[RMDB]
RNA sequence: GGGAACGACUCGAGUAGAGUCGAAAAGAUAUGGAAAUACGAUGAGCGAUAAGCUCGUUUCGGAAACGAAAUAGAGCUUUUGACGCUCGCGUAUUUCCUAAGUCAAAAGCAUCGGUUCGCCGAUGCAGAAUCACUACGGGUUCGCCCGUAGUGAUUCAAAAGAAACAACAACAACAAC
Reactivity to DMS in 0.01 (KOAc 150mM, MgCl2 10mM, bicine 150mM(pH8.5), 24C), signal-to-noise 2, nucleotides 027 to 126: g000a030u000a300u010g000g000a030a000a010u010a010c000g030a090u010g010a010g010c000g030a190u010a030a030g010c000u000c010g020u000u000u000c010g010g010a100a060a150c000g010a010a040a000u000a060g020a010g010c000u000u000u020u010g000a140c110g010c000u000c020g000c000g010u000a000u000u000u000c000c010u000a010a040g010u000c020a090a090a090a120g020c000a010u000c000g000g010u010u000c300g020c000c000g000a010u000g000c000a020
Reactivity to 2A3 in 0.01 (KOAc 150mM, MgCl2 10mM, bicine 150mM(pH8.5), 24C), signal-to-noise 3, nucleotides 027 to 126: g010a020u030a030u060g010g030a030a010a000u020a020c050g300a300u300g000a010g000c190g150a110u070a300a010g010c000u000c000g010u010u010u010c010g010g030a040a050a020c010g020a000a000a010u180a200g000a000g000c000u100u080u050u170g270a150c300g000c000u000c030g000c000g000u000a000u010u010u010c000c010u010a020a000g030u040c010a000a000a110a190g000c010a010u010c010g030g070u070u140c300g000c080c000g000a000u000g000c010a040